[RMDB]
RNA sequence: GGGAACGACUCGAGUAGAGUCGAAAAUGGUUCUUGCUGAGGAAUGUAUUCUAAUUAGGCCAGUUACCAACACAUAAGAUUCGAUGUUUAUAAAAUGCUGGAUGAGGCAAUUUGCUUGCAAAGGGCUUACGUAAUUAUGCUUCGGCAUAAUUACGUAAAAAGAAACAACAACAACAAC
Reactivity to DMS in 0.01 (KOAc 150mM, MgCl2 10mM, bicine 150mM(pH8.5), 24C), signal-to-noise 2, nucleotides 027 to 126: u010g010g010u000u000c030u000u000g010c010u000g000a150g010g000a080a070u000g020u020a040u000u000c050u010a060a140u010u000a080g030g020c030c010a050g000u000u000a040c120c040a050a080c230a060c090a080u000a060a080g010a160u010u000c110g020a090u010g010u020u000u010a090u010a050a070a070a080u020g000c000u010g000g000a060u000g000a070g000g010c020a050a030u000u000u000g000c040u010u000g010c050a040a060a080g000g000g010c040u010
Reactivity to 2A3 in 0.01 (KOAc 150mM, MgCl2 10mM, bicine 150mM(pH8.5), 24C), signal-to-noise 2, nucleotides 027 to 126: u070g000g040u020u000c000u010u040g000c010u050g000a050g060g030a150a070u080g070u160a230u070u140c040u030a070a210u140u060a020g000g070c020c000a000g000u010u010a060c010c040a050a010c030a000c010a060u120a120a070g020a110u070u110c040g080a070u050g050u050u120u000a140u020a040a120a010a010u080g040c000u020g040g020a030u050g040a040g030g000c020a020a020u090u030u080g030c030u040u050g080c060a060a080a000g060g030g000c000u020

Notes:
Structure probing data (DMS and 2A3) for a 177-nucleotide construct. Reactivities are given for positions 27 through 126. For DMS the reverse transcriptase was MarathonRT. 2A3 is a SHAPE reagent: it acylates the 2'-hydroxyl of flexible nucleotides of all four kinds.